[RMDB]
RNA sequence: GGGAACGACUCGAGUAGAGUCGAAAAUCAGACGGUGACCACGUCCUCGAGGCGGGUGAGGUAUCCCUCGGCCCAGACGAUGGUGGUGCAGAUGUACGGGCCGCCCCACGAGGCGGGGCGCUCACGAACACCAGGGAGAAUUCGUUCUCCCUGGUGUAAAAGAAACAACAACAACAAC
Reactivity to 2A3 in 0.01 (KOAc 150mM, MgCl2 10mM, bicine 150mM(pH8.5), 24C), signal-to-noise 2, nucleotides 027 to 126: u090c020a000g040a110c040g150g000u050g110a140c020c010a020c040g020u060c010c020u010c000g030a080g020g070c110g030g040g030u080g040a060g100g050u190a200u220c050c010c000u040c010g080g000c000c000c010a040g020a030c060g050a080u100g110g060u050g040g040u090g010c040a010g040a150u100g020u120a090c050g010g000g000c050c040g000c000c010c000c000a040c040g020a010g020g110c040g000g020g000g000c000g000c020u050c000a050c050g060a060
Reactivity to DMS in 0.01 (KOAc 150mM, MgCl2 10mM, bicine 150mM(pH8.5), 24C), signal-to-noise 4, nucleotides 027 to 126: u020c080a160g000a110c120g010g010u000g020a140c010c020a060c040g000u010c010c030u020c030g020a180g010g000c080g010g020g010u000g020a040g000g010u010a080u020c130c010c010u000c000g010g040c010c010c030a190g010a050c170g010a090u000g010g000u000g010g010u000g010c040a050g000a120u000g010u020a090c130g010g000g000c050c050g020c020c000c000c040a100c120g010a070g000g010c080g000g000g000g010c050g000c020u010c050a060c140g010a120

Structure probing data (2A3 and DMS) for a 177-nucleotide construct. DMS adducts were read by reverse transcription with MarathonRT. It was measured as part of the RMDB library OK2TST. Values cover nucleotides 27 to 126. The RNA was probed in 150 mM KOAc, 10 mM MgCl2 and 150 mM bicine (pH 8.5) at 24 C.